[RMDB]
RNA sequence: GGGAACGACUCGAGUAGAGUCGAAAAGAUAUGGAUAUCGUGUAGGGAGACUCAGCUCGGAAACGAGCUGGGAGGUCAUCGAUCUACCGAUAUCCUAAGUCAAAACUUCAUAGUUCGCUAUGAAGAACCGAAAUAUCUUGUUCGCAAGAUAUUUCGGAAAAGAAACAACAACAACAAC
Reactivity to DMS in 0.01 (KOAc 150mM, MgCl2 10mM, bicine 150mM(pH8.5), 24C), signal-to-noise 1, nucleotides 027 to 126: g000a040u000a170u010g000g000a010u000a000u010c010g040u030g020u000a040g010g000g010a300g030a080c030u000c000a000g000c020u010c000g050g020a010a010a180c010g000a020g030c000u020g000g020g020a110g040g040u010c150a250u000c090g000a240u010c000u000a010c010c020g020a010u000a000u000c000c000u000a000a000g020u020c000a060a050a060a100c030u000u000c000a000u000a010g000u010u010c300g000c000u000a010u020g000a010a010g000a110a200
Reactivity to 2A3 in 0.01 (KOAc 150mM, MgCl2 10mM, bicine 150mM(pH8.5), 24C), signal-to-noise 2, nucleotides 027 to 126: g010a000u010a000u090g000g010a000u010a000u030c040g020u030g010u300a010g060g120g080a280g040a070c040u020c050a000g030c000u010c000g000g000a020a020a010c000g000a000g000c000u010g010g220g000a030g090g160u120c020a090u210c150g210a200u010c010u000a000c030c000g010a000u010a000u040c000c000u000a020a000g010u000c020a000a000a070a270c000u010u000c000a030u010a040g020u040u060c300g020c110u010a010u030g000a000a010g040a030a020